The record gives the reactivity of an RNA of 177 nucleotides to DMS and 2A3. In probing experiments dimethyl sulfate is read out at A N1 and C N3, which are open when not base-paired. For DMS, 605 sequencing reads were counted. The RNA was probed in 150 mM KOAc, 10 mM MgCl2 and 150 mM bicine (pH 8.5) at 24 C.
RNA sequence: GGGAACGACUCGAGUAGAGUCGAAAAAUCCAUUUUUAUAAAUCAGUUUACACUUUAUUUGUCAUGAUUCCAAUGGCAAAAAAGAGCUUAUUUACUAUAAGUGAAAGACUAAUCCUUCCAAUUACAAGAUUACAUUGAACUUCGGUUCAAUGUAAUCAAAAGAAACAACAACAACAAC
Reactivity to DMS in 0.01 (KOAc 150mM, MgCl2 10mM, bicine 150mM(pH8.5), 24C), signal-to-noise 1, nucleotides 027 to 126: a190u040c030c000a080u000u020u000u000u000a070u030a120a020a020u000c010a030g000u000u000u000a180c130a130c030u000u000u000a180u000u030u000g000u000c000a020u000g000a250u000u010c170c180a110a020u000g000g010c000a010a000a010a030a070a000g000a170g000c010u010u000a020u010u010u010a100c150u030a070u000a000a040g000u010g010a060a090a070g000a030c110u000a040a110u020c110c020u000u000c060c050a060a040u000u030a090c170a030a100
Reactivity to 2A3 in 0.01 (KOAc 150mM, MgCl2 10mM, bicine 150mM(pH8.5), 24C), signal-to-noise 1, nucleotides 027 to 126: a000u030c020c000a040u090u040u040u010u070a110u040a070a000a030u000c000a010g020u050u130u200a030c040a010c020u070u150u190a300u040u070u030g000u000c000a030u000g180a230u280u000c060c040a070a040u010g000g000c000a010a000a000a000a000a070g020a000g000c010u000u000a030u060u040u030a070c080u020a020u030a160a000g000u030g050a250a110a100g060a030c040u030a000a100u000c000c000u100u000c000c030a100a140u070u020a130c010a000a100